Conditions: 150 mM KOAc, 10 mM MgCl2 and 150 mM bicine (pH 8.5), 24 C. An RNA of 177 nucleotides, treated with DMS and 2A3 and read out base by base. For 2A3 the reverse transcriptase was SuperScript II with manganese. For DMS the reverse transcriptase was MarathonRT. For DMS, 4,072 sequencing reads were counted. Reactivities are given for positions 27 through 126.
RNA sequence: GGGAACGACUCGAGUAGAGUCGAAAAUGGGCUCGUCGUCUGCUUUGGUGGUGGCGAUGCUUCUCACGACAUGUGCGCUCAUCGGCUCGUCGCCGGGCCCAUACGAGCUGGCGCGACUGGCCUGGGAGCAAUCAGCACUAUUCGUAGUGCUGAUUGCAAAAGAAACAACAACAACAAC
Reactivity to DMS in 0.01 (KOAc 150mM, MgCl2 10mM, bicine 150mM(pH8.5), 24C), signal-to-noise 3, nucleotides 027 to 126: u020g010g010g010c010u000c130g010u000c020g010u010c020u020g010c030u000u000u010g010g030u010g020g010u010g000g010c010g000a020u010g010c100u010u000c050u000c070a100c110g010a100c080a090u010g010u010g030c070g000c050u000c110a100u010c220g010g000c020u010c170g010u000c110g010c060c030g000g020g000c030c010c030a060u010a060c110g000a050g020c030u010g010g020c080g020c040g000a030c040u000g000g000c020c020u000g010g010g000a100
Reactivity to 2A3 in 0.01 (KOAc 150mM, MgCl2 10mM, bicine 150mM(pH8.5), 24C), signal-to-noise 3, nucleotides 027 to 126: u070g000g010g010c010u010c010g040u000c000g050u020c060u060g030c010u150u120u280g130g020u110g010g000u040g020g020c030g010a020u130g010c000u070u040c020u000c020a020c030g100a020c070a120u160g050u070g080c030g030c040u040c060a140u100c070g020g000c000u010c040g040u010c010g040c070c020g030g030g000c000c010c010a010u090a040c030g010a020g000c040u070g020g010c060g010c020g080a040c020u030g020g000c000c000u030g020g040g010a090